[RMDB]
RNA sequence: GGGAACGACUCGAGUAGAGUCGAAAAAGAUAUGGAGUCGUCCGCUAAGCGACGAUCGUACUAGUAGCUGAUAUAUCGGAAACGAUAUAUCCGAAAGUACGGGAGCUUAUGACGACUCCUAAGUCAAUCAAUAAAUACGCUUCGGCGUAUUUAUUGAAAAAGAAACAACAACAACAAC
Reactivity to DMS in 0.01 (KOAc 150mM, MgCl2 10mM, bicine 150mM(pH8.5), 24C), signal-to-noise 3, nucleotides 027 to 126: a140g000a060u000a300u000g000g000a010g020u000c000g000u000c010c160g010c130u010a000a010g010c000g010a060c270g010a010u020c000g000u000a000c000u000a120g010u000a210g000c280u000g000a010u000a000u000a000u000c000g000g000a090a070a180c000g020a010u000a000u000a000u000c000c040g000a160a170a140g000u000a000c010g000g000g010a020g010c000u000u020a010u010g010a040c000g000a010c000u000c000c000u000a010a050g000u000c030a140a170
Reactivity to 2A3 in 0.01 (KOAc 150mM, MgCl2 10mM, bicine 150mM(pH8.5), 24C), signal-to-noise 3, nucleotides 027 to 126: a000g040a020u040a010u110g000g000a000g010u000c000g010u020c010c030g010c190u040a010a010g010c000g300a300c010g000a160u000c000g020u030a000c010u000a020g300u070a030g070c170u120g020a000u000a000u000a000u020c010g000g010a030a070a020c000g010a000u000a000u000a010u040c000c020g040a070a050a000g000u010a000c010g000g010g020a000g000c000u060u030a050u240g000a000c010g000a000c000u000c000c000u010a010a000g000u000c010a010a160